[RMDB]
RNA sequence: GGGAACGACUCGAGUAGAGUCGAAAAUCUUAUCGCUCGUCGAUACCAGUAGUCAGUAGUUGUGCAAACCUAUCGGUGGCUAUCGAAUCGAGUCGCAAGAAUGUGCACAACAAUUUCGUUCGCGGAAGGCACGCUUUUAUUUCGAUAAAAGCGUGCCAAAAGAAACAACAACAACAAC
Reactivity to 2A3 in 0.01 (KOAc 150mM, MgCl2 10mM, bicine 150mM(pH8.5), 24C), signal-to-noise 2, nucleotides 027 to 126: u000c000u000u000a010u120c030g060c000u090c120g290u170c000g150a050u110a060c060c060a080g180u160a010g070u040c050a020g140u150a000g020u160u000g000u010g010c030a000a130a190c030c000u130a110u050c000g100g010u040g000g040c010u100a090u050c130g130a090a070u140c030g040a000g020u000c000g000c000a000a010g040a050a040u090g000u020g050c030a000c000a000a000c000a090a070u090u110u080c100g030u110u170c090g000c000g120g030a040a040